[RMDB]
RNA sequence: GGGAACGACUCGAGUAGAGUCGAAAAUCACCUCUUCAAGAGGCCCCCUGGACCUUCACGAGCAAAAGGAUAUACCAGGAGGUAUGCACUUAGGGCCAGAGGGGCCUCUGCUCUGAGGCAGGGCCAGGCUUUCUCAAGCGUUCGCGCUUGAGAAAGCAAAAGAAACAACAACAACAAC
Reactivity to DMS in 0.01 (KOAc 150mM, MgCl2 10mM, bicine 150mM(pH8.5), 24C), signal-to-noise 1, nucleotides 027 to 126: u010c030a210c000c030u000c050u000u000c150a060a000g030a030g010g000c000c000c000c000c000u000g000g000a020c000c000u000u010c300a080c180g050a130g020c230a060a080a010a010g010g040a100u000a050u000a020c020c000a200g000g040a160g000g040u000a000u000g000c300a040c020u020u020a050g020g010g000c050c000a010g050a150g010g000g010g020c000c010u020c000u020g000c150u000c140u010g010a020g000g010c100a050g000g010g000c060c030a120g010